[RMDB]
RNA sequence: GGGAACGACUCGAGUAGAGUCGAAAAUUAUGUUCGCCUUAGUGCCUCAUAAACUCCGGAAUGACGCAGAGCCGUUUACGGUGCUUAUCGUCCACUGACAGAUGUCGCUUAUGCCUCAUCAGACACCAUGGACACAACGUUGAGUGAAGCACCCACUGUGAUAGUAUAGGUUCGCCUAUACUAUCACAAAAGAAACAACAACAACAAC
Reactivity to DMS in 0.01 (KOAc 150mM, MgCl2 10mM, bicine 150mM(pH8.5), 24C), signal-to-noise 4, nucleotides 027 to 156: u000u000a050u000g020u000u000c040g020c030c020u000u020a110g030u000g010c020c030u000c020a030u000a040a050a050c040u020c010c010g010g030a110a060u010g020a050c040g010c090a200g020a210g010c000c010g020u000u000u000a110c040g010g010u010g020c020u000u000a100u000c070g020u000c010c010a030c020u000g000a210c030a180g010a020u000g030u000c040g000c030u010u010a130u010g040c000c000u000c010a010u010c010a120g010a050c020a110c000c040a060u000g020g000a050c010a120c070a060a070c050g030u000u000g000a220g010u000g000a050a040g000c020a020c010c020c040a110c300u000
Reactivity to 2A3 in 0.01 (KOAc 150mM, MgCl2 10mM, bicine 150mM(pH8.5), 24C), signal-to-noise 9, nucleotides 027 to 156: u060u020a050u060g060u030u060c040g050c010c000u080u100a090g020u120g160c000c010u030c010a030u050a050a070a050c040u030c040c030g050g080a120a100u120g020a030c030g020c100a080g050a050g210c110c020g040u040u060u110a070c040g000g010u020g020c020u090u100a090u200c090g010u000c010c010a040c060u040g030a030c030a080g020a030u010g010u040c020g000c050u220u210a110u300g010c010c010u020c010a030u010c010a030g070a100c020a020c030c030a020u020g000g000a010c010a010c030a180a030c070g050u050u080g040a060g030u060g030a020a000g010c010a010c000c010c000a040c030u020
An RNA of 207 nucleotides, treated with DMS and 2A3 and read out base by base. The data come from the RNA Mapping Database (RMDB), library PDB130. For 2A3 the reverse transcriptase was SuperScript II with manganese. For DMS, 8,746 sequencing reads were counted. The reactions ran in a buffer of 150 mM KOAc, 10 mM MgCl2 and 150 mM bicine (pH 8.5), at 24 C. Values cover nucleotides 27 to 156.